The record gives the reactivity of an RNA of 207 nucleotides to DMS and 2A3. High 2A3 reactivity points to a flexible backbone, as in loops and unpaired stretches.

[RMDB]
RNA sequence: GGGAACGACUCGAGUAGAGUCGAAAACAAGGCCAACGCUGGGAUUAAAGCUCGACGUAGGGAGGAAUCUGAAGCGCGCACGGAUUCCGAAGAACUACGAGAACGAGCUGAUCCUGUGCUGAAGCGCGCACGGCAACCGAAAGGUGCGAAAGCGGAACAGUUGGUAUAGGUUCGCCUAUACCAACUGAAAAGAAACAACAACAACAAC
Reactivity to DMS in 0.01 (KOAc 150mM, MgCl2 10mM, bicine 150mM(pH8.5), 24C), signal-to-noise 3, nucleotides 027 to 156: c050a110a140g000g040c020c030a080a300c070g050c010u010g000g000g000a060u010u000a030a080a060g010c000u000c000g070a190c020g010u000a000g000g010g000a100g040g020a000a010u000c000u000g040a050a020g020c000g040c010g020c020a300c030g000g000a020u000u010c020c010g010a070a130g010a160a270c010u000a030c000g010a090g000a180a230c040g010a030g010c030u010g000a010u000c000c000u040g010u000g020c030u000g010a080a040g010c020g040c020g010c030a300c000g000g000c000a070a010c010c030g030a160a140a150g030g030u000g000c040g020a040a170a100g000c020g010g000a080a260
Reactivity to 2A3 in 0.01 (KOAc 150mM, MgCl2 10mM, bicine 150mM(pH8.5), 24C), signal-to-noise 3, nucleotides 027 to 156: c020a010a060g140g000c010c020a070a030c030g000c030u030g000g000g000a010u000u070a300a110a010g000c000u010c010g050a060c000g000u000a000g000g010g000a010g010g000a010a000u000c000u020g060a180a030g010c010g000c000g000c000a010c010g010g000a000u000u010c000c000g020a070a000g000a000a000c000u010a010c020g010a030g030a240a080c010g000a000g000c000u000g000a000u000c000c000u000g010u020g000c000u020g010a110a030g000c000g000c000g000c000a040c030g000g000c010a020a010c000c000g050a070a030a010g020g000u030g000c020g030a060a010a000g050c070g030g030a100a030

For DMS the reverse transcriptase was MarathonRT. Source: RMDB library RNAMAK, as collected in RNAgym. Conditions: 150 mM KOAc, 10 mM MgCl2 and 150 mM bicine (pH 8.5), 24 C. For DMS, 5,165 sequencing reads were counted.